The data come from the RNA Mapping Database (RMDB), library OK1LIB.
This 177-nucleotide RNA was probed chemically with DMS and 2A3.
For 2A3, 2,463 sequencing reads were counted.
The RNA was probed in 150 mM KOAc, 10 mM MgCl2 and 150 mM bicine (pH 8.5) at 24 C.
For DMS the reverse transcriptase was MarathonRT.
Reactivities are rounded to 0.1 and cut off at 0 and 3.
RNA sequence: GGGAACGACUCGAGUAGAGUCGAAAAGAGCUCGAGCUUCGAUGGGUGCGAGAACACCGUCUCGGCAAUGAACGGCCGGCCCAAGUCGAUGAGCCUCGCGCGGGUGUCGGCGGCGACCUGCGCCGCCACGGACUUACGUUUUCGAACGUAAGUCCGUAAAAGAAACAACAACAACAAC
Reactivity to DMS in 0.01 (KOAc 150mM, MgCl2 10mM, bicine 150mM(pH8.5), 24C), signal-to-noise 2, nucleotides 027 to 126: g000a140g030c000u000c010g000a050g000c000u000u010c010g010a140u000g000g000g010u000g010c020g010a190g000a120a240c160a140c030c010g020u000c080u010c030g010g020c220a100a020u020g030a050a020c030g000g020c210c000g000g000c000c000c020a120a090g010u000c000g000a120u020g000a110g020c120c020u000c130g000c220g000c020g020g010g010u020g010u010c060g000g060c000g040g040c010g020a140c130c030u010g000c060g030c000c000g010c030c050
Reactivity to 2A3 in 0.01 (KOAc 150mM, MgCl2 10mM, bicine 150mM(pH8.5), 24C), signal-to-noise 4, nucleotides 027 to 126: g090a030g000c020u020c030g030a010g010c010u020u030c020g050a050u030g000g040g030u150g300c020g040a150g040a120a050c060a070c080c000g080u040c060u030c200g180g060c130a050a210u180g010a050a000c020g020g000c010c000g020g000c000c000c000a020a030g170u010c020g000a040u060g100a030g040c030c020u010c010g020c010g010c010g020g060g020u110g080u080c030g000g000c010g000g000c010g020a080c010c070u140g040c030g000c020c000g000c000c000